RNA sequence: GGGAACGACUCGAGUAGAGUCGAAAAGAUAUGGAUACUGCCGAUAAGGAUCGUUCGGAAACGAACGAAUCCUUUUGACGGCAAUCCUAAGUCAAAAUCGCGUGCAAUGUUCGCAUUGCACGCGAAACCAUUCCAUGGGGUUCGCCCCAUGGAAUGGAAAAGAAACAACAACAACAAC
Reactivity to 2A3 in 0.01 (KOAc 150mM, MgCl2 10mM, bicine 150mM(pH8.5), 24C), signal-to-noise 1, nucleotides 027 to 126: g030a010u080a010u100g000g000a020u070a290c100u090g020c000c000g030a050u060a220a060g000g030a010u000c010g010u010u010c010g010g030a070a040a050c000g000a000a000c000g010a010a020u000c010c010u000u000u020u020g090a050c000g000g000c030a000a000u010c010c000u020a040a030g030u000c040a020a000a050a300u040c010g030c010g030u020g010c040a000a000u010g040u060u160c290g040c190a010u040u000g010c000a010c000g000c010g000a000a000a000
Reactivity to DMS in 0.01 (KOAc 150mM, MgCl2 10mM, bicine 150mM(pH8.5), 24C), signal-to-noise 1, nucleotides 027 to 126: g020a020u010a230u010g000g020a010u000a040c190u000g020c000c000g020a050u010a040a020g040g010a020u010c020g020u000u020c000g000g020a080a060a170c010g010a010a000c000g040a030a090u000c000c000u000u000u000u000g000a190c000g000g000c000a080a010u010c000c000u010a050a220g010u000c000a060a060a100a120u000c000g030c000g000u000g030c020a030a010u000g000u050u000c250g030c030a000u000u000g000c010a000c000g000c000g000a000a030a080
Annotation: The record gives the reactivity of an RNA of 177 nucleotides to 2A3 and DMS. Source: RMDB library TTRDEL, as collected in RNAgym. Values cover nucleotides 27 to 126. Conditions: 150 mM KOAc, 10 mM MgCl2 and 150 mM bicine (pH 8.5), 24 C. The DMS profile rests on 981 reads.